[RMDB]
RNA sequence: GGGAACGACUCGAGUAGAGUCGAAAAGAGCAAUAUGUGGAAGUUGUAUGUCACUACGUCGGCCUCAGUUCUUAUGAAAUCGGGCCUGACUAUGUUGAAGUAUAGGUAGACAUCUUCAGGUGUGUAGCACGACUCAUACAUUCGUGUAUGAGUCGUGAAAAGAAACAACAACAACAAC
Reactivity to 2A3 in 0.01 (KOAc 150mM, MgCl2 10mM, bicine 150mM(pH8.5), 24C), signal-to-noise 6, nucleotides 027 to 126: g060a000g020c030a060a090u090a100u300g090u100g040g040a070a100g030u060u030g050u080a110u070g120u030c020a010c060u060a020c040g040u030c010g040g010c020c010u030c020a050g020u050u000c030u080u300a210u230g080a060a050a030u110c030g010g020g000c000c000u020g000a000c010u000a030u060g050u040u050g020a060a010g030u080a060u090a200g120g020u020a020g010a030c000a010u000c010u030u020c010a020g060g000u100g010u030g020u130a010g070
Reactivity to DMS in 0.01 (KOAc 150mM, MgCl2 10mM, bicine 150mM(pH8.5), 24C), signal-to-noise 5, nucleotides 027 to 126: g010a080g010c040a070a070u000a080u010g030u010g010g000a070a080g010u000u000g010u000a050u000g000u000c040a050c060u010a130c200g010u000c010g010g010c020c000u010c170a100g020u000u010c030u000u010a170u020g000a020a050a050u000c300g020g000g010c000c000u010g010a010c010u000a070u010g010u000u000g010a050a120g020u030a110u010a060g000g010u010a150g010a040c020a020u000c030u010u000c050a050g010g010u010g010u000g010u000a060g000